[RMDB]
RNA sequence: GGGAACGACUCGAGUAGAGUCGAAAACGCGUUGUGGGGGAGCUUUUAAUAGCUGUUCGCACAGUCGCGGUCGGACAGGGUGGUUUCUUUAGCGCUGACACCAAUUUAAAAAAACUCCACACUGACGCAUUACGUCAACUUUCGAGUUGACGUAAUGAAAAGAAACAACAACAACAAC
Reactivity to DMS in 0.01 (KOAc 150mM, MgCl2 10mM, bicine 150mM(pH8.5), 24C), signal-to-noise 5, nucleotides 027 to 126: c030g020c040g010u010u000g020u000g010g000g020g010g000a020g010c030u000u010u000u020a090a110u010a040g010c010u010g000u010u000c010g020c060a030c010a050g000u010c040g040c020g010g020u000c060g010g000a090c050a050g000g010g040u000g000g010u000u000u000c050u000u000u000a110g020c120g020c050u010g010a090c080a080c070c040a060a100u000u010u020a000a000a050a050a050a070a100c080u010c020c010a040c050a070c050u000g000a080c120g000
Reactivity to 2A3 in 0.01 (KOAc 150mM, MgCl2 10mM, bicine 150mM(pH8.5), 24C), signal-to-noise 5, nucleotides 027 to 126: c010g000c010g030u010u030g010u020g060g090g000g010g010a010g010c000u070u070u030u160a230a240u160a090g000c010u050g200u120u010c050g010c070a010c000a020g070u100c030g000c040g000g030u040c040g000g040a060c020a060g010g000g060u030g010g010u030u090u030c000u050u070u060a060g000c070g030c080u030g030a020c010a030c060c000a050a060u170u250u300a070a120a000a000a000a000a020c010u000c010c010a040c010a020c030u040g020a020c040g000